[RMDB]
RNA sequence: GGGAACGACUCGAGUAGAGUCGAAAAGAGGUGCCCAGCUCCGCGCUUUCCGAUUUUGGGGGCCUUUCCAGAAAAUGUUGCAAAAAAGCUAAGCCGGCGGGCAGAGGAAAACGCCUGUAGCCGGCGACCACCAGAUAGAAUUCGUUCUAUCUGGUGGAAAAGAAACAACAACAACAAC
Reactivity to 2A3 in 0.01 (KOAc 150mM, MgCl2 10mM, bicine 150mM(pH8.5), 24C), signal-to-noise 3, nucleotides 027 to 126: g060a020g050g000u090g080c030c000c000a010g000c020u060c060c030g040c000g030c020u040u080u100c030c030g090a110u060u060u180u220g000g000g000g040g010c020c000u010u040u000c010c030a040g200a040a100a020a030u170g010u060u020g000c050a000a010a020a040a140a120g030c030u100a090a020g000c010c010g000g000c010g050g050g030c040a020g080a130g100g080a120a160a030a000c090g020c010c010u110g100u130a020g000c000c010g000g010c000g000a000
Reactivity to DMS in 0.01 (KOAc 150mM, MgCl2 10mM, bicine 150mM(pH8.5), 24C), signal-to-noise 2, nucleotides 027 to 126: g000a040g000g000u000g000c010c000c040a110g020c100u010c060c040g000c040g000c040u000u030u010c060c050g000a110u000u010u020u020g000g010g010g000g010c040c000u000u000u000c010c000a130g000a070a040a110a070u020g010u000u000g030c040a000a030a120a140a090a120g020c070u010a100a160g020c010c010g000g000c020g040g010g000c010a070g020a140g000g000a090a120a140a160c150g020c000c000u000g020u010a260g030c020c020g020g000c000g000a050
Chemical mapping of a 177-nucleotide RNA with 2A3 and DMS. Reactivities are given for positions 27 through 126. The 2A3 profile rests on 1,730 reads. The RNA was probed in 150 mM KOAc, 10 mM MgCl2 and 150 mM bicine (pH 8.5) at 24 C. It was measured as part of the RMDB libraries RFM100 and RFMREP.